The data come from the RNA Mapping Database (RMDB), library M2PK50. The record gives the reactivity of an RNA of 177 nucleotides to DMS and 2A3. For DMS the reverse transcriptase was MarathonRT. The reactions ran in a buffer of 150 mM KOAc, 10 mM MgCl2 and 150 mM bicine (pH 8.5), at 24 C. Values are in units of 0.01, from 0 to 300, in steps of 10.
RNA sequence: GGGAACGACUCGAGUAGAGUCGAAAACCUGUAACGUUCGCGUUACAGGAAAAUAAAAAUCUCCAGCCAGGAGAACGCGAAAAAUUGAUCGAAAACGAUCAAAAAGUCUACAGUUCGCUGUAGACAACAUAUGGUAUUUCUUCGGAAAUACCAUAUGAAAAGAAACAACAACAACAAC
Reactivity to DMS in 0.01 (KOAc 150mM, MgCl2 10mM, bicine 150mM(pH8.5), 24C), signal-to-noise 4, nucleotides 027 to 126: c000c000u010g010u010a000a000c010g020u000u010c070g020c000g010u000u010a000c010a010g010g000a020a020a070a090u010a020a050a060a070a050u000c010u000c000c000a180g040c180c210a170g010g010a020g000a040a050c070g000c020g000a020a030a040a140a110u000u000g000a010u000c000g000a100a060a080a170c060g000a000u000c010a000a030a090a120a120g010u000c000u000a010c010a010g000u010u010c160g010c000u000g000u000a020g010a000c000a070a110
Reactivity to 2A3 in 0.01 (KOAc 150mM, MgCl2 10mM, bicine 150mM(pH8.5), 24C), signal-to-noise 3, nucleotides 027 to 126: c000c000u000g000u010a010a000c010g020u020u040c220g020c000g100u000u000a000c000a000g020g020a030a090a020a010u100a000a060a020a010a020u010c010u000c010c020a140g110c050c040a030g020g020a030g020a020a040c040g030c030g190a070a010a020a040a150u030u030g000a000u000c000g040a130a100a040a300c020g000a020u000c000a000a010a010a030a010g000u000c000u000a010c000a010g010u010u060c110g080c060u000g000u000a010g000a000c000a000a000